This 177-nucleotide RNA was probed chemically with DMS and 2A3.
Reactivities are given for positions 27 through 126.

RNA sequence: GGGAACGACUCGAGUAGAGUCGAAAAUGUCGACCAUGCAAAUCGCAGGACAAAGGUACAGCGAGAUAGAAUGGUCUGGAAACGAUCGACCCUGAAUCCUGUGUAGCGUGUGAAUGGAGGGAAAGUCUGUUUGCAACGCAUUCGUGCGUUGCAAACAAAAAGAAACAACAACAACAAC
Reactivity to DMS in 0.01 (KOAc 150mM, MgCl2 10mM, bicine 150mM(pH8.5), 24C), signal-to-noise 1, nucleotides 027 to 126: u000g000u000c030g000a300c070c070a040u070g050c060a030a080a040u070c010g000c000a060g040g000a030c000a100a150a040g010g000u000a060c040a090g000c070g000a100g000a260u040a130g000a080a050u020g010g000u000c000u000g020g030a020a050a190c050g000a050u000c000g040a040c110c010c000u000g030a270a300u000c010c000u000g030u050g020u060a260g000c010g020u010g000u030g010a160a040u000g000g000a110g000g050g000a100a110a060g010u010c030
Reactivity to 2A3 in 0.01 (KOAc 150mM, MgCl2 10mM, bicine 150mM(pH8.5), 24C), signal-to-noise 1, nucleotides 027 to 126: u260g060u040c000g010a030c000c000a020u030g020c000a000a090a000u080c030g000c000a010g000g080a010c050a020a090a020g080g030u230a050c010a040g020c090g130a020g010a090u160a060g140a080a130u120g000g080u050c040u040g000g000a010a130a000c020g000a040u080c150g000a050c000c000c000u000g060a000a020u020c010c010u000g000u000g000u050a000g000c030g000u010g010u000g040a060a030u110g060g010a090g060g000g000a040a010a030g080u060c110
The DMS profile rests on 1,163 reads.
For 2A3 the reverse transcriptase was SuperScript II with manganese.
It was measured as part of the RMDB library OK1LIB.
The RNA was probed in 150 mM KOAc, 10 mM MgCl2 and 150 mM bicine (pH 8.5) at 24 C.